[RMDB]
RNA sequence: GGGAACGACUCGAGUAGAGUCGAAAAUCCUAAGUCUCAUGGGAGGGUCUAGUACUUCGUUGAUCUAUGUCGGAAACGACAUAGGGAGAAGUACGGACCCGAAGAACAUGAGAUAUGGAAAAAGGUAACACUAUCUCGUUCGCGAGAUAGUGUUACCGUGAACAUGUUAGUUCGCUAACAUGUUCACAAAAGAAACAACAACAACAAC
Reactivity to 2A3 in 0.01 (KOAc 150mM, MgCl2 10mM, bicine 150mM(pH8.5), 24C), signal-to-noise 6, nucleotides 027 to 156: u030c000c000u020a100a020g030u000c000u000c000a000u010g000g010g010a040g000g000g000u000c010u070a180g010u050a010c010u000u010c020g240u230u020g000a000u000c000u000a000u000g000u000c000g010g040a090a060a070c020g010a000c000a000u000a000g000g000g000a020g000a000a020g000u020a000c020g000g000a000c010c010c000g000a000a000g010a010a000c000a000u000g000a000g000a000u030a050u050g050g050a050a050a030a090a100g020g000u010a000a000c000a000c000u000a000u000c000u000c010g060u090u080c220g010c010g120a000g000a000u000a000g000u000g000u000u000a000c000c000
Reactivity to DMS in 0.01 (KOAc 150mM, MgCl2 10mM, bicine 150mM(pH8.5), 24C), signal-to-noise 3, nucleotides 027 to 156: u000c000c000u000a070a250g020u000c000u000c010a010u000g020g000g020a280g010g020g020u000c000u000a090g070u000a010c000u000u000c000g000u010u010g010a030u000c000u000a010u000g000u000c010g000g010a220a170a300c010g020a020c000a010u000a000g010g030g000a020g000a020a010g010u010a000c000g000g000a020c010c010c000g000a040a080g000a140a150c010a020u000g000a010g030a020u000a110u000g000g000a050a110a110a140a150g030g020u010a010a020c000a020c000u010a010u000c000u000c000g020u000u010c300g020c020g000a010g010a010u000a010g010u000g010u000u000a000c000c000

This 207-nucleotide RNA was probed chemically with 2A3 and DMS. The data come from the RNA Mapping Database (RMDB), library RNAMAK. Reactivities are given for positions 27 through 156.